Source: RMDB library M2PK90, as collected in RNAgym. Chemical mapping of a 177-nucleotide RNA with DMS. For DMS the reverse transcriptase was MarathonRT.
RNA sequence: GGGAACGACUCGAGUAGAGUCGAAAAAAAAAGGAGGAGGAGAAAUAUAGAGAGAGAUCGGUCCUCCCACGGGCGUCUCUCUCUGAUAAGAGGAAUAAGAGGAUGAUUAAUAGAUAGCGCGCAAAAAGUAUAUGUAUACCUUCGGGUAUACAUAUACAAAAGAAACAACAACAACAAC
Reactivity to DMS in 0.01 (KOAc 150mM, MgCl2 10mM, bicine 150mM(pH8.5), 24C), signal-to-noise 1, nucleotides 027 to 126: a000a110a060a020a080g000g010a060g010g020a040g000g010a090g000a100a040a070u000a110u000a030g000a040g000a010g020a010g010a000u020c060g060g050u000c010c000u010c060c030c060a060c300g030g020g000c060g030u010c000u000c010u000c000u010c010u000g010a030u010a010a100g010a060g010g000a020a040u000a040a120g020a030g000g010a060u000g010a060u010u010a040a020u000a090g000a060u010a010g020c060g000c040g040c120a060a070a050a060a090